[RMDB]
Record summary: Chemical mapping of a 177-nucleotide RNA with DMS. The RNA was probed in 150 mM KOAc, 10 mM MgCl2 and 150 mM bicine (pH 8.5) at 24 C. High DMS reactivity at an A or C suggests that its Watson-Crick edge is free. Source: RMDB library OK2TRN, as collected in RNAgym.

RNA sequence: GGGAACGACUCGAGUAGAGUCGAAAAGGGGAUCCGUACGCCGAAGCGCACCACAUUCGGCCGCUCGGUCGCCCACACGACGGACCCGAUGAACCAGAGAAUAUCCUUGUUCUCUGUCCGAAUCACCUAAAUUACCACCCUUCGGGGUGGUAAUUUAAAAAGAAACAACAACAACAAC
Reactivity to DMS in 0.01 (KOAc 150mM, MgCl2 10mM, bicine 150mM(pH8.5), 24C), signal-to-noise 1, nucleotides 027 to 126: g010g010g000g020a080u000c040c010g000u010a100c150g010c020c040g000a010a120g040c010g040c180a080c040c050a130c210a220u010u010c110g010g000c300c020g000c090u010c020g010g010u020c010g010c020c010c110a040c200a000c130g020a040c080g010g000a100c000c000c000g020a050u010g000a060a080c130c020a010g020a010g000a030a020u000a090u010c180c150u000u010g010u000u010c000u000c000u000g010u000c070c090g000a170a060u000c060a110c150c040